[RMDB]
RNA sequence: GGGAACGACUCGAGUAGAGUCGAAAACUCGCGACCCCAUUGAGGCGUGGGGAGCGACAUGAAUCAGCCUCGAUUAGAUGUGGUCGACAGUACAGCGGCGUACAGCGACCUAGUUAGAAGCCGCAAAACCGGAAGAGAUGACGCUCGACGGACGUCAAAUAAUAGUCGAGUUCGCUCGACUAUUAUUAAAAGAAACAACAACAACAAC
Reactivity to 2A3 in 0.01 (KOAc 150mM, MgCl2 10mM, bicine 150mM(pH8.5), 24C), signal-to-noise 3, nucleotides 027 to 156: c040u010c000g000c000g030a300c020c010c000c000a000u030u090g010a010g000g000c010g000u000g000g000g000g000a000g000c020g040a020c050a110u200g090a090a130u150c050a030g010c020c000u010c010g020a170u170u210a110g090a170u120g120u100g060g000u000c000g010a100c090a070g000u020a030c000a030g000c010g000g000c010g000u000a000c010a010g000c000g000a010c000c000u000a010g010u020u020a120g020a150a020g000c000c000g000c000a020a000a020a130c040c050g060g020a130a010g020a050g010a070u080g060a010c050g020c060u040c040g060a050c010g060g000a020c030g030u030c020a010
Reactivity to DMS in 0.01 (KOAc 150mM, MgCl2 10mM, bicine 150mM(pH8.5), 24C), signal-to-noise 3, nucleotides 027 to 156: c080u020c040g030c010g000a250c030c000c010c010a070u000u020g020a070g020g040c050g020u000g000g020g010g010a300g010c010g030a100c090a090u000g010a160a150u000c150a100g000c000c010u000c030g010a170u020u010a100g000a100u000g010u000g010g000u000c010g000a060c010a130g000u000a080c040a190g010c010g020g020c030g010u000a090c050a250g020c030g010a030c030c030u000a080g020u010u010a080g010a090a160g050c010c000g000c000a030a040a160a080c030c020g000g010a120a160g010a230g000a150u000g010a020c020g020c040u010c020g000a070c080g010g010a040c000g030u000c000a030